[RMDB]
The record gives the reactivity of an RNA of 177 nucleotides to DMS and 2A3. Reactivities are rounded to 0.1 and cut off at 0 and 3. The RNA was probed in 150 mM KOAc, 10 mM MgCl2 and 150 mM bicine (pH 8.5) at 24 C. For 2A3, 2,025 sequencing reads were counted.
RNA sequence: GGGAACGACUCGAGUAGAGUCGAAAACGAUAAUCAGGUUGUCUGCACGCUGUACAAAUUAAAUCAUUCUCCAUCUCAAAUAGACCUAUUAAACAAUCUGAGAGAUAUACAUAGAAAUAAUGCAGUCCACUGAGGAGUGGUUCGCCACUCCUCAGUGAAAAGAAACAACAACAACAAC
Reactivity to DMS in 0.01 (KOAc 150mM, MgCl2 10mM, bicine 150mM(pH8.5), 24C), signal-to-noise 2, nucleotides 027 to 126: c160g000a110u070a030a030u040c080a050g030g030u000u010g000u000c030u000g000c030a100c020g030c040u000g000u010a020c110a050a230a100u000u000a090a020a010u030c010a140u000u000c000u000c050c060a010u000c010u020c090a070a070a110u010a090g000a040c040c060u040a120u000u000a070a050a070c070a070a090u010c020u010g000a070g030a090g000a020u000a100u010a140c070a060u000a080g000a050a140a180u000a040a100u040g010c040a030g020u000c040
Reactivity to 2A3 in 0.01 (KOAc 150mM, MgCl2 10mM, bicine 150mM(pH8.5), 24C), signal-to-noise 4, nucleotides 027 to 126: c020g040a100u090a090a070u150c010a010g110g000u060u000g040u060c010u010g010c020a000c070g040c010u010g030u070a050c040a030a110a030u220u180a030a230a070u150c010a010u040u000c020u010c080c050a080u050c000u000c060a010a150a080u150a060g040a030c000c040u070a110u200u240a130a150a060c070a090a040u010c030u030g040a030g010a000g040a060u000a000u040a260c040a020u140a060g170a040a060a050u240a040a040u130g030c040a000g010u000c030